Conditions: 150 mM KOAc, 10 mM MgCl2 and 150 mM bicine (pH 8.5), 24 C. This 207-nucleotide RNA was probed chemically with DMS and 2A3.

RNA sequence: GGGAACGACUCGAGUAGAGUCGAAAAGCUACAAGAAAACUCUCCAGUGGAUGUUACAGACAUUGCUGUUGGCAACAUAAGCACUCAAAAAGUCAGAAGUGUGCUCAGAUCAGGGGCAAUAGUAAAAACCCCUGUCACCUUCAAGGAAUUACAUGAGUCCUCUUAUAUUAUUCGUAAUAUAAGAGGAAAAAGAAACAACAACAACAAC
Reactivity to DMS in 0.01 (KOAc 150mM, MgCl2 10mM, bicine 150mM(pH8.5), 24C), signal-to-noise 2, nucleotides 027 to 156: g020c050u000a050c050a070a110g020a120a070a070a070c050u010c040u000c050c060a130g020u000g010g000a060u000g000u000u000a100c100a210g030a160c070a100u010u000g040c040u000g000u020u010g040g000c050a090a090c050a150u020a060a120g000c040a000c020u000c060a070a150a070a050a090g000u010c060a120g010a050a050g020u010g010u000g000c050u010c060a070g020a080u000c030a040g020g000g000g000c030a050a080u030a100g030u030a070a090a140a080a050c000c000c020c030u020g010u000c030a070c000c020u020u000c040a100a100g010g010a050a110u000u000a020c060a160u000g000a120g000
Reactivity to 2A3 in 0.01 (KOAc 150mM, MgCl2 10mM, bicine 150mM(pH8.5), 24C), signal-to-noise 1, nucleotides 027 to 156: g000c010u040a060c040a020a000g030a000a080a010a000c000u000c000u050c100c010a050g010u040g070g000a020u020g020u020u170a100c080a020g050a000c010a050u020u060g070c000u010g020u070u040g060g000c010a050a020c010a030u170a010a050g050c000a010c000u020c070a000a080a170a080a000g110u020c010a010g020a030a090g080u010g010u020g090c010u010c070a060g020a150u090c010a000g000g000g000g000c050a010a060u060a100g110u100a020a020a040a030a080c030c000c000c000u000g000u000c010a010c010c000u100u070c020a050a050g060g020a050a130u200u200a190c010a090u120g030a030g060
2A3 adducts were read by reverse transcription with SuperScript II with manganese. The 2A3 profile rests on 715 reads. Values cover nucleotides 27 to 156.